Chemical mapping of a 177-nucleotide RNA with DMS. The data come from the RNA Mapping Database (RMDB), library OK2TRN. Conditions: 150 mM KOAc, 10 mM MgCl2 and 150 mM bicine (pH 8.5), 24 C. For DMS, 554 sequencing reads were counted. For DMS the reverse transcriptase was MarathonRT.

RNA sequence: GGGAACGACUCGAGUAGAGUCGAAAACUAGCAAUCUGGAGACGUCAUGGGGCAUCAGGGUGACCAGCUUUGACUCCUGUAGUGAGGGGUAAACCCGACCGUGGCUUCCGGCACUAUUGCAGAAAGGACCCCAAUUUCUGUUCGCAGAAAUUGGGGUAAAAGAAACAACAACAACAAC
Reactivity to DMS in 0.01 (KOAc 150mM, MgCl2 10mM, bicine 150mM(pH8.5), 24C), signal-to-noise 1, nucleotides 027 to 126: c020u000a170g000c010a020a030u000c060u020g000g030a020g000a120c110g020u000c010a030u000g000g070g090g010c120a090u010c130a180g020g010g000u010g030a110c110c110a100g020c060u000u000u000g000a090c010u000c000c160u040g040u020a060g000u010g030a120g010g010g020g000u010a010a140a010c000c010c000g000a080c000c050g020u010g010g000c000u040u000c020c010g040g000c300a130c090u000a050u000u090g000c000a130g000a020a100a110g000g020